[RMDB]
This 177-nucleotide RNA was probed chemically with DMS and 2A3. The data come from the RNA Mapping Database (RMDB), library OK2TST. DMS adducts were read by reverse transcription with MarathonRT. 2A3 adducts were read by reverse transcription with SuperScript II with manganese. Values cover nucleotides 27 to 126.

RNA sequence: GGGAACGACUCGAGUAGAGUCGAAAACAUGCAAUGGAGGAAGGAUAGCAUCUUCAACAAAUGGUGCUGGGAAAACUGGAAAUCCAUAUGCAACAAAAUGAAACUGAAUCCCUUUCUCUCGCCAUGCUAUAGCAUCAAGUUUCGACUUGAUGCUAUAAAAAGAAACAACAACAACAAC
Reactivity to DMS in 0.01 (KOAc 150mM, MgCl2 10mM, bicine 150mM(pH8.5), 24C), signal-to-noise 6, nucleotides 027 to 126: c060a070u010g000c050a100a090u010g000g000a030g000g000a100a060g010g000a080u000a070g000c010a040u010c030u000u000c080a080a090c210a080a100a100u000g010g000u010g010c010u000g000g000g000a060a060a070a100c180u000g010g000a080a170a090u000c000c000a030u000a070u010g000c020a020a060c100a040a040a100a080u000g000a060a030a080c130u010g000a070a110u000c110c010c010u000u000u010c010u000c010u000c140g020c140c040a040u010g010c160
Reactivity to 2A3 in 0.01 (KOAc 150mM, MgCl2 10mM, bicine 150mM(pH8.5), 24C), signal-to-noise 4, nucleotides 027 to 126: c010a000u050g000c010a050a130u210g020g000a010g000g000a020a010g020g010a050u050a080g030c000a020u010c020u090u070c050a140a120c030a030a200a040u100g000g000u010g000c000u020g000g010g080a060a130a020a090c110u080g050g060a060a060a060u030c020c000a030u090a090u180g000c020a020a010c020a030a120a020a050u150g030a090a030a010c040u030g030a040a050u060c020c000c000u020u030u000c020u000c010u030c040g070c050c020a020u070g000c030